[RMDB]
RNA sequence: GGGAACGACUCGAGUAGAGUCGAAAAGGUUGCAAGGCAGUGAUACUGAAAUAAAAAAUGCCUUUCUCAGUGCAUUGACCUAUUUUGGCCGAUAUGAAAUUGAUGAACAGCUUGCGACCGUCACACAGGUGAGUCUAAUCUUCGGAUUAGACUCACCAAAAGAAACAACAACAACAAC
Reactivity to DMS in 0.01 (KOAc 150mM, MgCl2 10mM, bicine 150mM(pH8.5), 24C), signal-to-noise 2, nucleotides 027 to 126: g010g010u000u000g000c050a020a060g010g030c090a080g030u000g020a290u010a210c020u000g020a050a180a110u030a010a000a080a130a030a050u000g010c030c010u000u000u000c140u000c150a040g000u010g070c030a010u000u000g000a170c160c010u010a040u030u030u000u000g000g020c030c050g010a080u000a060u010g010a050a080a130u000u000g000a080u000g010a060a060c110a240g020c030u000u000g000c000g030a010c010c010g010u000c060a050c150a090c290a050
Reactivity to 2A3 in 0.01 (KOAc 150mM, MgCl2 10mM, bicine 150mM(pH8.5), 24C), signal-to-noise 1, nucleotides 027 to 126: g000g020u020u010g050c020a030a010g200g020c040a060g060u030g100a030u060a160c010u040g000a010a020a010u070a000a100a000a030a000a000u030g010c000c000u010u230u040c130u000c010a100g020u130g100c010a010u030u050g070a110c000c020u000a010u010u020u040u050g050g070c000c050g030a040u050a100u230g210a140a140a070u090u160g040a060u090g040a120a020c020a050g030c000u000u010g000c000g040a010c030c000g000u130c060a100c010a000c020a030
Chemical mapping of a 177-nucleotide RNA with DMS and 2A3. The RNA was probed in 150 mM KOAc, 10 mM MgCl2 and 150 mM bicine (pH 8.5) at 24 C. It was measured as part of the RMDB library OK2TST. For DMS the reverse transcriptase was MarathonRT. 2A3 is a SHAPE reagent: it acylates the 2'-hydroxyl of flexible nucleotides of all four kinds.